[RMDB]
RNA sequence: GGGAACGACUCGAGUAGAGUCGAAAAUUGACAUAUCUACCAGACCAGAUAGAUAUUUCAAAUAGAAGAGCAACACAUAGUCAAUAUGAUGCAUGGUUUGAAGGUGUGAAGAAGGACUACGACGUGACAACGGCAGCGAUUUCGAUCGCUGCCGUUGAAAAGAAACAACAACAACAAC
Reactivity to DMS in 0.01 (KOAc 150mM, MgCl2 10mM, bicine 150mM(pH8.5), 24C), signal-to-noise 1, nucleotides 027 to 126: u040u040g000a000c130a000u000a000u000c000u000a150c030c000a010g000a260c260c060a170g000a090u000a000g000a020u000a000u010u010u010c000a020a020a140u030a150g090a160a170g000a060g020c040a000a040c140a060c150a090u000a090g000u010c080a000a080u040a010u000g020a050u030g000c080a140u000g000g000u000u040u000g000a000a010g000g020u000g000u030g000a090a150g000a040a020g020g000a180c000u000a000c170g000a080c250g000u000g000a050
Reactivity to 2A3 in 0.01 (KOAc 150mM, MgCl2 10mM, bicine 150mM(pH8.5), 24C), signal-to-noise 2, nucleotides 027 to 126: u000u000g000a000c070a000u000a000u040c000u060a080c000c000a190g070a150c000c100a060g000a010u000a040g020a000u010a020u040u100u000c110a110a110a040u150a150g060a150a000g060a030g000c070a040a040c000a000c000a050u040a000g110u020c000a190a080u010a170u270g040a000u070g020c010a030u130g100g060u130u080u230g170a080a060g030g040u040g030u000g140a010a030g060a110a050g110g040a000c020u000a070c040g070a000c120g000u000g000a000
Conditions: 150 mM KOAc, 10 mM MgCl2 and 150 mM bicine (pH 8.5), 24 C. The record gives the reactivity of an RNA of 177 nucleotides to DMS and 2A3. For 2A3 the reverse transcriptase was SuperScript II with manganese.